[RMDB]
RNA sequence: GGGAACGACUCGAGUAGAGUCGAAAAGAUAUGGAUGCAGACCCAUCCGUGAUAUCUGAUGACCUGUUAAGGUUCGGAAACGAACCUUAACAGCAAGGAUAUUUAUCGGAUGCUGCAUCCUAAGUCACUGUUGUUUCAUGUUCGCAUGAAACAACAGAAAAGAAACAACAACAACAAC
Reactivity to DMS in 0.01 (KOAc 150mM, MgCl2 10mM, bicine 150mM(pH8.5), 24C), signal-to-noise 2, nucleotides 027 to 126: g000a010u020a300u010g000g000a010u000g000c000a020g040a300c250c300c050a000u000c000c000g050u000g020a000u000a010u000c000u000g020a180u020g000a110c300c000u010g000u000u000a000a000g010g000u010u000c000g030g000a070a060a140c000g010a010a020c010c000u000u000a000a000c000a010g030c120a030a150g010g010a010u000a000u010u000u010a170u000c010g000g000a030u000g000c010u000g010c010a000u000c000c000u000a000a060g000u000c020a300
Reactivity to 2A3 in 0.01 (KOAc 150mM, MgCl2 10mM, bicine 150mM(pH8.5), 24C), signal-to-noise 2, nucleotides 027 to 126: g050a000u030a020u110g000g000a000u000g030c000a020g010a260c220c140c010a020u000c020c000g000u030g000a000u010a010u000c030u030g140a300u300g120a210c040c030u000g020u030u000a000a010g050g000u000u000c010g000g030a040a100a030c000g020a000a000c040c000u000u000a000a000c010a000g030c010a030a200g010g000a000u000a020u040u240u110a300u300c000g030g000a000u000g080c000u010g000c030a000u020c000c010u000a020a010g050u010c040a010
Description:
The record gives the reactivity of an RNA of 177 nucleotides to DMS and 2A3. For DMS the reverse transcriptase was MarathonRT. Reactivities are given for positions 27 through 126. For 2A3, 3,121 sequencing reads were counted. The RNA was probed in 150 mM KOAc, 10 mM MgCl2 and 150 mM bicine (pH 8.5) at 24 C. 2A3 is a SHAPE reagent: it acylates the 2'-hydroxyl of flexible nucleotides of all four kinds.